[RMDB]
RNA sequence: GGGAACGACUCGAGUAGAGUCGAAAAAAUAAGCACUGGUACCUGGAGAGGCUCAGGCUAGUGGGAAAAUCGACGAGGGCUGAUCAAAACAAAACUCACCAAGACCAUGUGAAGGCAAAAAGGAGCCUUAGAAAGGAGAUUCUUCCCUGCUCCACAACUCAUUCGAUACAUUCGUGUAUCGAAUGAGAAAAGAAACAACAACAACAAC
Reactivity to 2A3 in 0.01 (KOAc 150mM, MgCl2 10mM, bicine 150mM(pH8.5), 24C), signal-to-noise 2, nucleotides 027 to 156: a000a000u200a020a000g090c000a000c080u010g060g000u130a130c030c000u020g020g010a090g030a020g030g010c000u010c060a030g080g040c030u050a060g010u090g020g030g000a070a120a060a090u150c100g060a080c040g040a110g000g020g000c030u030g030a060u110c070a080a080a030a110c050a030a100a020a030c020u050c010a050c000c050a030a020g030a100c030c000a060u090g030u030g080a040a020g060g000c050a160a010a000a000a150g070g020a020g020c010c000u030u030a090g040a040a040a010g040g040a020g010a020u060u070c000u080u010c050c000c000u010g000c000u000c020c020a030c010a070a140